Structure probing data (DMS and 2A3) for a 207-nucleotide construct. The data come from the RNA Mapping Database (RMDB), library M2RFPK. The reactions ran in a buffer of 150 mM KOAc, 10 mM MgCl2 and 150 mM bicine (pH 8.5), at 24 C.
[RMDB]
RNA sequence: GGGAACGACUCGAGUAGAGUCGAAAACGUCCCCGUCGUACAGAAUGGUAACAUAUCUCUCCAAAUAUCUGAGCUUGGGUAUCCGGGGAAACCCAACCCCUUGGGAAGAUUGGGUAUAUGGCUAAAUUACAUCGAUUGUACUUCGGUACAAUCGAAACAGUAGCAACAAGUUCGCUUGUUGCUACUGAAAAGAAACAACAACAACAAC
Reactivity to DMS in 0.01 (KOAc 150mM, MgCl2 10mM, bicine 150mM(pH8.5), 24C), signal-to-noise 2, nucleotides 027 to 156: c040g000u000c000c010c000c070g050u000c140g000u010a160c000a060g000a160a090u000g000g000u000a070a100c040a110u000a060u020c000u000c000u000c030c040a020a110a110u010a090u000c050u000g000a300g020c090u000u000g030g010g040u000a070u020c050c070g040g050g020g020a130a070a150c010c000c000a010a030c100c000c000c040u030u020g040g000g010a230a070g000a080u000u000g010g000g010u000a060u000a060u010g030g030c060u000a060a070a100u000u000a090c090a200u000c000g000a030u000u000g030u000a010c000u000u000c250g040g020u000a010c000a000a010u000c010g010a010a030a090
Reactivity to 2A3 in 0.01 (KOAc 150mM, MgCl2 10mM, bicine 150mM(pH8.5), 24C), signal-to-noise 4, nucleotides 027 to 156: c060g120u050c020c010c000c010g130u140c020g030u090a080c040a120g120a140a120u110g060g000u120a140a010c010a010u060a040u030c060u010c040u040c110c000a080a130a130u150a080u020c040u000g020a030g060c010u050u030g010g000g000u050a060u050c070c090g000g000g000g010a060a040a030c010c000c010a000a050c000c000c010c000u000u030g040g010g010a010a000g010a050u040u060g020g000g020u030a010u010a010u030g010g010c040u070a120a070a120u190u150a070c060a090u020c000g000a000u000u000g000u000a000c000u010u030c090g060g000u000a000c000a000a000u000c000g000a000a010a000